RNA sequence: GGGAACGACUCGAGUAGAGUCGAAAAGCCGUAGUCUCUCGGAAACUGGAGCUGACCCGUGCUGAGAAGCAUGUGCACAACUUCAUGAUGGACACGCAGUUGACGAAACGGCUGAAAAAUGCUGCGAAGCCGAAAAUAUCUUCGGAUAUUUUCGGCUAAAAGAAACAACAACAACAAC
Reactivity to 2A3 in 0.01 (KOAc 150mM, MgCl2 10mM, bicine 150mM(pH8.5), 24C), signal-to-noise 1, nucleotides 027 to 126: g000c000c000g010u000a020g040u000c000u000c010u050c070g080g080a160a100a080c110u030g010g000a020g020c010u000g030a070c010c000c000g020u030g000c000u040g020a030g030a050a000g010c000a010u030g000u060g040c060a010c000a300a030c010u030u040c000a030u170g060a060u080g180g050a050c060a000c150g010c000a020g020u170u100g060a030c040g000a230a060a000c020g010g010c000u000g000a000a020a030a010a010u140g000c030u020g100c050g050a050
Reactivity to DMS in 0.01 (KOAc 150mM, MgCl2 10mM, bicine 150mM(pH8.5), 24C), signal-to-noise 4, nucleotides 027 to 126: g010c000c000g010u000a160g010u000c020u000c140u000c020g000g020a100a100a110c230u000g020g000a010g050c030u000g020a300c050c070c000g010u000g010c000u000g010a230g010a230a030g020c010a000u000g000u010g010c070a130c040a040a000c030u000u010c020a040u000g020a130u000g010g010a090c060a140c040g010c080a020g000u000u010g000a120c080g020a110a120a050c010g020g020c000u000g000a020a100a080a070a050u010g010c010u000g000c030g000a230